RNA sequence: GGGAACGACUCGAGUAGAGUCGAAAACGAGAUGAGUUCGCUCAUCUCGAAAGAACCGCGGGCGUGACUCGGUCAGAGCAUGACAGGCGCUGGGGUCACGAAAAAGUGGUGUGUUCGCACACCACAAGUUGCUAGUAAAGUUCGCUUUACUAGCAACAAAAGAAACAACAACAACAAC
Reactivity to DMS in 0.01 (KOAc 150mM, MgCl2 10mM, bicine 150mM(pH8.5), 24C), signal-to-noise 2, nucleotides 027 to 126: c010g010a000g020a000u000g020a010g020u000u020c220g010c000u000c000a000u000c010u000c000g010a020a060a120g000a140a170c000c000g030c160g000g000g000c020g010u000g000a030c010u000c020g020g000u020c020a020g000a060g000c020a070u000g030a100c300a150g000g000c030g020c010u000g000g010g000g000u000c010a010c000g000a040a050a050a130a080g000u010g010g010u000g010u000g000u000u010c160g000c000a010c000a010c000c000a010c000a030a050
Reactivity to 2A3 in 0.01 (KOAc 150mM, MgCl2 10mM, bicine 150mM(pH8.5), 24C), signal-to-noise 3, nucleotides 027 to 126: c000g010a000g000a010u000g000a000g060u030u130c200g070c040u020c010a010u000c000u010c010g000a000a010a000g020a050a050c020c020g000c110g110g040g020c010g000u030g020a020c000u020c020g050g100u090c080a020g010a020g050c050a070u160g140a140c070a090g200g000c050g000c050u040g010g000g020g010u000c010a020c000g030a030a050a020a010a000g000u010g000g000u000g000u000g000u000u070c220g010c080a000c000a000c000c000a000c000a000a030
The record gives the reactivity of an RNA of 177 nucleotides to DMS and 2A3.
2A3 adducts were read by reverse transcription with SuperScript II with manganese.
DMS adducts were read by reverse transcription with MarathonRT.
For DMS, 3,594 sequencing reads were counted.
As a SHAPE reagent, 2A3 marks flexible, mostly unpaired nucleotides at the ribose 2'-OH.